[RMDB]
RNA sequence: GGGAACGACUCGAGUAGAGUCGAAAACUGGACUCCAUUCAUACCCAGUCUCACAGUUCUUCUAUGCUGAUGCAGCAGGAUCAGAUCAGUGCCGGUCUCAGGGUCUACUGGACAGCAUUGAACGAGAGUAGUGUUUAACUUUCGAGUUAAACACUACAAAAGAAACAACAACAACAAC
Reactivity to 2A3 in 0.01 (KOAc 150mM, MgCl2 10mM, bicine 150mM(pH8.5), 24C), signal-to-noise 7, nucleotides 027 to 126: c010u020g030g040a020c020u020c070c040a110u110u100c040a040u110a170c000c010c010a030g070u000c020u020c040a100c020a070g050u080u030c010u060u000c010u050a060u070g010c010u010g060a200u100g080c020a030g010c050a110g040g010a020u020c020a010g020a060u020c010a030g110u050g250c070c060g090g000u000c040u000c060a110g090g010g110u020c020u070a070c000u020g030g110a010c000a010g000c010a020u010u050g020a040a020c070g020a020g010a010
Reactivity to DMS in 0.01 (KOAc 150mM, MgCl2 10mM, bicine 150mM(pH8.5), 24C), signal-to-noise 7, nucleotides 027 to 126: c060u000g010g010a100c050u000c040c060a090u000u010c080a110u010a150c060c010c010a130g000u000c040u000c050a120c160a130g010u000u000c030u010u000c050u010a040u000g000c010u000g000a100u000g010c020a020g020c040a040g020g010a030u000c030a060g000a060u000c020a090g020u000g020c110c090g000g000u000c020u010c150a080g020g010g000u000c050u000a060c020u000g010g000a040c010a070g000c020a030u000u000g000a040a050c110g010a090g010a150

The record gives the reactivity of an RNA of 177 nucleotides to 2A3 and DMS. The 2A3 profile rests on 14,265 reads. The reactions ran in a buffer of 150 mM KOAc, 10 mM MgCl2 and 150 mM bicine (pH 8.5), at 24 C. 2A3 adducts were read by reverse transcription with SuperScript II with manganese. Reactivities are rounded to 0.1 and cut off at 0 and 3.